[RMDB]
RNA sequence: GGGAACGACUCGAGUAGAGUCGAAAAAGCCUCAUAUACGUAUGAGGCAAAAGAGCUGGUCAAUGUGAUUACUCCUAUUUGGAAUAUCAGAAUACUAGUGAAGAACGACUCGGUACGCCGAGUCGAAGACCUGCUACUCUUUCGAGAGUAGCAGGUCAAAAGAAACAACAACAACAAC
Reactivity to 2A3 in 0.01 (KOAc 150mM, MgCl2 10mM, bicine 150mM(pH8.5), 24C), signal-to-noise 3, nucleotides 027 to 126: a000g000c000c000u000c010a000u010a000u000a000c050g010u030a000u020g000a000g000g000c040a030a000a000a030g000a000g000c010u010g010g000u010c020a040a060u000g000u010g020a000u000u090a040c050u040c000c020u160a300u270u240u290g030g000a020a030u020a000u020c000a000g070a040a090u220a300c000u000a000g010u030g120a030a040g080a150a000c000g000a000c000u000c030g000g090u070a040c290g080c020c000g000a000g000u010c000g000a000a000
Reactivity to DMS in 0.01 (KOAc 150mM, MgCl2 10mM, bicine 150mM(pH8.5), 24C), signal-to-noise 1, nucleotides 027 to 126: a050g010c000c010u010c000a000u000a000u010a090c180g010u000a020u080g010a000g000g000c050a050a010a050a170g000a300g020c010u000g040g020u040c000a090a020u000g000u000g000a020u000u000a130c130u000c000c000u000a100u000u000u000g000g010a020a010u000a000u010c040a000g000a170a000u020a050c000u000a000g080u040g010a120a170g010a040a190c000g000a030c000u000c000g000g000u030a070c190g070c000c060g000a000g000u020c000g020a000a010
Structure probing data (2A3 and DMS) for a 177-nucleotide construct. The reactions ran in a buffer of 150 mM KOAc, 10 mM MgCl2 and 150 mM bicine (pH 8.5), at 24 C. It was measured as part of the RMDB library RFM100. DMS adducts were read by reverse transcription with MarathonRT.